[RMDB]
RNA sequence: GGGAACGACUCGAGUAGAGUCGAAAAGUGCAUAAUGCGAAUUUAUCUGUAUUACAGAAAGCGGCUGAUAUUUUUUUAGAUUACAUCGACACAUAGUUACAUUGCAGCCUGCCGUCGACGUGUCGCGUGCCACCUAUCCAGAAAUUGCUAUAGGACCCCGGUAUAUAUUCUUCGGAAUAUAUACCGGAAAAGAAACAACAACAACAAC
Reactivity to 2A3 in 0.01 (KOAc 150mM, MgCl2 10mM, bicine 150mM(pH8.5), 24C), signal-to-noise 2, nucleotides 027 to 156: g070u090g000c020a010u050a080a130u130g030c010g090a070a080u120u130u020a120u040c040u020g040u070a300u160u180a040c010a010g060a050a090a000g000c010g060g000c040u000g090a020u040a240u160u130u080u010u050u080u150a090g020a050u080u070a090c010a100u090c040g030a020c030a000c000a090u090a010g050u090u040a070c040a120u040u170g060c040a000g110c010c020u020g050c010c020g000u000c000g030a070c090g050u070g000u080c000g000c010g000u010g040c010c040a040c010c000u030a020u050c040c000a000g050a050a100a020u140u170g070c040u110a010u150a050g080g000a020c110c270